Conditions: 150 mM KOAc, 10 mM MgCl2 and 150 mM bicine (pH 8.5), 24 C. Chemical mapping of a 177-nucleotide RNA with 2A3 and DMS.

[RMDB]
RNA sequence: GGGAACGACUCGAGUAGAGUCGAAAAAUGCCGAUCGAUUAGCGCUAAUGCUACGUAGCUACGCGAUAUUAUAGCGCAUGCAUUAAUGCGCUAAUAUUACGUAUAUAUAGCCGAUUACGGCUAUAUAAGUCAUUCGUUAGUUCGCUAACGAAUGACUAAAAGAAACAACAACAACAAC
Reactivity to 2A3 in 0.01 (KOAc 150mM, MgCl2 10mM, bicine 150mM(pH8.5), 24C), signal-to-noise 2, nucleotides 027 to 126: a020u160g030c040c000g100a180u150c110g080a050u000u040a000g040c020g030c080u070a050a020u130g000c020u040a070c110g090u040a070g040c000u020a040c040g070c050g140a010u030a050u220u120a080u070a030g000c000g050c020a030u050g040c000a060u010u120a180a040u150g000c010g000c000u000a010a010u030a000u000u080a000c010g100u030a010u010a000u010a000u010a130g000c010c010g020a040u190u300a100c040g030g000c000u010a000u000a000u000a000
Reactivity to DMS in 0.01 (KOAc 150mM, MgCl2 10mM, bicine 150mM(pH8.5), 24C), signal-to-noise 2, nucleotides 027 to 126: a080u010g010c060c020g000a120u000c080g010a080u010u000a000g020c030g030c090u000a070a050u010g010c020u000a090c160g020u010a100g000c060u020a020c100g010c110g000a120u000a100u010u000a120u000a020g000c000g000c010a030u000g010c160a060u000u000a030a030u000g020c000g010c010u000a000a010u000a030u000u010a090c150g000u000a090u000a030u000a000u000a000g010c010c010g010a300u000u010a090c090g010g000c000u010a000u000a000u000a070
For DMS the reverse transcriptase was MarathonRT.